[RMDB]
Structure probing data (2A3 and DMS) for a 177-nucleotide construct. The DMS profile rests on 4,931 reads.
RNA sequence: GGGAACGACUCGAGUAGAGUCGAAAAGAUAUGGAGCUAGGGAGAUGACAUCGGAAACGAUGUGAUCAUCGACGAUCUAGUCUCCUAAGUCAAAAGCGUUUAGGUGCCUUCGGGCACCUAAACGCAACAUGGAUAGGAUGUUCGCAUCCUAUCCAUGAAAAGAAACAACAACAACAAC
Reactivity to 2A3 in 0.01 (KOAc 150mM, MgCl2 10mM, bicine 150mM(pH8.5), 24C), signal-to-noise 3, nucleotides 027 to 126: g020a000u060a040u130g000g010a000g000c000u010a010g000g030g010a010g000a000u000g000a010c010a000u000c000g010g050a060a060a040c020g000a020u010g040u110g110a080u040c000a000u000c000g210a250c020g000a050u000c000u000a010g120u120c010u020c020c000u020a110a010g040u000c040a010a040a110a110g000c030g000u000u010u000a000g010g000u010g030c020c000u030u170c300g030g000g000c020a010c010c000u020a020a000a000c010g000c000a000a000
Reactivity to DMS in 0.01 (KOAc 150mM, MgCl2 10mM, bicine 150mM(pH8.5), 24C), signal-to-noise 3, nucleotides 027 to 126: g010a050u000a300u010g000g010a010g000c000u000a020g010g000g000a020g010a020u000g020a050c030a010u000c010g000g000a110a100a150c000g000a010u000g000u000g000a060u000c010a010u000c010g010a210c260g010a010u010c000u000a030g000u020c010u000c000c000u010a040a090g000u000c050a080a100a130a100g010c000g010u000u000u000a010g000g010u000g000c000c010u000u020c210g030g000g010c010a000c000c000u010a000a000a000c000g000c000a000a030
As a SHAPE reagent, 2A3 marks flexible, mostly unpaired nucleotides at the ribose 2'-OH. 2A3 adducts were read by reverse transcription with SuperScript II with manganese. Reactivities are given for positions 27 through 126. The reactions ran in a buffer of 150 mM KOAc, 10 mM MgCl2 and 150 mM bicine (pH 8.5), at 24 C. It was measured as part of the RMDB library TTRDEL.